[RMDB]
RNA sequence: GGGAACGACUCGAGUAGAGUCGAAAAGCAUGCUCACAGUGAAGACAUGGCAUGGUGAAUUUGUCAUACACAACACCACACAGUUGAGAAUUCACUUCAUCCAAGGAAAGGAUGUAAUUUUGAUCCGCUGUGUAGCCUACUUCGGUAGGCUACACAGAAAAGAAACAACAACAACAAC
Reactivity to DMS in 0.01 (KOAc 150mM, MgCl2 10mM, bicine 150mM(pH8.5), 24C), signal-to-noise 2, nucleotides 027 to 126: g020c040a070u000g030c010u000c040a050c070a100g000u000g000a050a060g000a100c130a090u000g000g020c000a030u010g020g010u000g010a030a050u050u000u010g000u000c070a040u030a090c070a110c080a040a100c040a050c030c100a090c060a050c270a040g000u010u030g050a150g060a010a010u000u000c020a050c070u000u000c100a020u030c000c040a080a130g060g010a120a120a110g000g000a000u000g000u030a000a000u000u000u000u000g000a200u020c000c110g030
Reactivity to 2A3 in 0.01 (KOAc 150mM, MgCl2 10mM, bicine 150mM(pH8.5), 24C), signal-to-noise 5, nucleotides 027 to 126: g050c020a030u100g010c020u080c020a090c070a040g070u060g200a090a030g060a060c050a070u100g010g070c010a010u030g020g010u040g040a070a120u040u040u070g180u050c050a000u180a180c060a000c040a070a180c040a040c100c000a040c030a020c040a060g080u090u090g070a040g040a080a040u020u030c020a030c000u030u040c000a020u000c020c000a050a040g250g090a230a070a030g010g000a020u020g010u140a110a190u050u140u020u130g060a070u030c010c010g000
The record gives the reactivity of an RNA of 177 nucleotides to DMS and 2A3.
The DMS profile rests on 2,064 reads.
DMS adducts were read by reverse transcription with MarathonRT.